RNA sequence: GGGAACGACUCGAGUAGAGUCGAAAAACGGGCAGUGGCGAUGGCAACGCGGCAGCCGCAGGGUCGACUUCUUCGCAGCCGCAACAGACGGGGCACGGGCAAAGAGGGGAUCUCGUUCUGUUGGAAGUCGGCGUAAUACUUUCGAGUAUUACGCCGAAAAAGAAACAACAACAACAAC
Reactivity to 2A3 in 0.01 (KOAc 150mM, MgCl2 10mM, bicine 150mM(pH8.5), 24C), signal-to-noise 3, nucleotides 027 to 126: a000c020g020g040g000c010a040g050u080g090g010c050g050a080u080g020g020c010a030a080c060g000c000g020g030c010a000g050c020c020g040c030a020g050g030g010u050c030g030a070c030u040u030c010u040u050c070g000c040a020g000c010c010g020c020a010a010c010a010g020a020c000g000g030g010g000c040a030c050g030g000g000c040a110a060a030g070a060g060g020g020g000a030u020c020u020c040g040u110u040c030u050g040u020u000g020g000a060a000g050
Reactivity to DMS in 0.01 (KOAc 150mM, MgCl2 10mM, bicine 150mM(pH8.5), 24C), signal-to-noise 1, nucleotides 027 to 126: a080c120g000g000g000c080a010g020u020g000g000c120g010a050u010g000g000c010a080a040c080g000c000g000g000c010a090g000c030c220g000c090a220g000g000g000u000c020g000a120c110u030u040c120u000u020c030g000c010a150g030c040c060g110c040a050a050c030a020g000a070c020g000g010g000g030c150a090c130g000g020g000c090a030a080a050g000a120g000g000g000g000a010u010c000u000c030g000u050u000c020u010g000u040u000g030g020a010a050g000
Description:
The record gives the reactivity of an RNA of 177 nucleotides to 2A3 and DMS. The reactions ran in a buffer of 150 mM KOAc, 10 mM MgCl2 and 150 mM bicine (pH 8.5), at 24 C.